[RMDB]
Overview
Chemical mapping of a 177-nucleotide RNA with 2A3 and DMS. The 2A3 profile rests on 666 reads. It was measured as part of the RMDB library 15KREP.
RNA sequence: GGGAACGACUCGAGUAGAGUCGAAAACUAUCGUUCCCAUAUGGAUGACCUGCGUCUAUACAGUUGCAAUGUGCUUUAGACACUUCUUCUGGGUUUUAGCUUAUUUUAGUAAGAAACAUGUAGAAGUCUGAAACAGUAAGUUCGCUUACUGUUUCAGAAAAGAAACAACAACAACAAC
Reactivity to 2A3 in 0.01 (KOAc 150mM, MgCl2 10mM, bicine 150mM(pH8.5), 24C), signal-to-noise 1, nucleotides 027 to 126: c010u010a040u160c010g010u000u030c000c010c020a010u080a010u060g070g000a060u070g050a040c020c060u080g140c050g000u000c010u060a080u010a080c010a080g050u030u050g050c030a080a030u020g020u030g030c000u100u070u030a030g040a090c010a010c000u050u000c010u050u000c030u000g130g000g050u050u040u080u040a010g030c010u070u040a080u150u300u100u030a000g030u000a010a100g010a070a010a010c000a050u120g000u030a050g000a200a030g050u000
Reactivity to DMS in 0.01 (KOAc 150mM, MgCl2 10mM, bicine 150mM(pH8.5), 24C), signal-to-noise 1, nucleotides 027 to 126: c050u010a090u010c010g000u010u000c000c000c000a110u000a010u010g020g020a090u000g030a110c120c060u000g020c040g010u010c020u000a130u000a060c150a050g010u000u000g010c080a070a070u010g010u010g010c070u000u000u000a060g020a130c150a080c020u000u000c010u000u000c010u010g030g000g020u000u000u010u000a130g000c030u000u000a070u010u020u020u000a040g010u020a050a070g020a060a020a080c020a080u000g010u020a040g030a050a080g000u000
High DMS reactivity at an A or C suggests that its Watson-Crick edge is free. For DMS the reverse transcriptase was MarathonRT. The RNA was probed in 150 mM KOAc, 10 mM MgCl2 and 150 mM bicine (pH 8.5) at 24 C. Values cover nucleotides 27 to 126.